[RMDB]
RNA sequence: GGGAACGACUCGAGUAGAGUCGAAAAGCACGUGGGUUCAGAUGAUGGGCCCGCAUCUGUACGAAAGUGAGACGAAAGUCCAGCCAACGUGCAUGAGCACGCGGGCCCCGUGCUCACCAGCAAAAGAGAGUCAUAGCUGCUUCGGCAGCUAUGACUCAAAAGAAACAACAACAACAAC
Reactivity to 2A3 in 0.01 (KOAc 150mM, MgCl2 10mM, bicine 150mM(pH8.5), 24C), signal-to-noise 1, nucleotides 027 to 126: g070c000a000c000g000u040g050g010g020u060u040c020a070g000a000u050g080a040u080g000g000g010c000c000c000g010c000a000u000c000u000g060u130a050c030g070a010a120a030g070u160g100a050g000a090c000g060a150a020a000g000u070c000c000a020g000c000c000a000a020c010g000u000g030c000a010u030g000a000g080c070a000c090g000c040g000g000g000c000c000c000c000g000u000g010c000u000c000a030c010c000a000g170c040a030a010a060a030g160a020